[RMDB]
RNA sequence: GGGAACGACUCGAGUAGAGUCGAAAAUUGGUUUCGACGGGGGUUGCGAAGCAGAUGCGGGCAUACCGGGGUCUCAGAUUCCCGUAAAACACUGAAUUCAAAUAGUCGCAAACGACGAAACUUACGCUUUAGCCGCUUAAGGCUAGCCGUUGCAGCAGUAUUCAUAAUUGUUCGCAAUUAUGAAUACAAAAGAAACAACAACAACAAC
Reactivity to DMS in 0.01 (KOAc 150mM, MgCl2 10mM, bicine 150mM(pH8.5), 24C), signal-to-noise 2, nucleotides 027 to 156: u000u000g010g000u000u000u030c080g030a060c080g040g030g030g040g000u000u010g020c030g030a150a150g010c040a100g050a090u000g000c070g040g010g000c060a120u000a050c080c150g040g000g080g050u000c070u000c040a090g000a200u000u000c000c000c000g020u000a040a050a050a120c050a100c080u000g000a060a110u000u020c160a110a090a190u000a040g030u000c050g000c070a050a040a040c060g000a060c050g000a080a010a020c030u000u000a100c090g000c050u000u010u000a090g000c000c040g000c150u020u000a050a110g010g010c020u010a040g060c050c030g000u000u000g000c030a090g030c020a300
Reactivity to 2A3 in 0.01 (KOAc 150mM, MgCl2 10mM, bicine 150mM(pH8.5), 24C), signal-to-noise 3, nucleotides 027 to 156: u060u050g020g000u000u000u070c040g040a020c010g040g000g010g010g020u010u010g010c050g020a010a020g010c050a010g030a040u120g050c040g030g000g000c040a070u080a080c070c020g010g010g020g000u000c040u020c080a020g020a080u120u090c000c000c020g030u070a040a040a020a010c050a000c010u020g010a070a050u080u050c020a050a060a110u130a070g030u040c030g000c080a110a140a080c030g060a000c000g010a050a010a000c070u130u100a060c070g010c030u100u080u090a020g010c020c030g030c120u130u160a100a030g010g000c000u010a000g040c010c010g030u020u050g000c050a080g000c010a010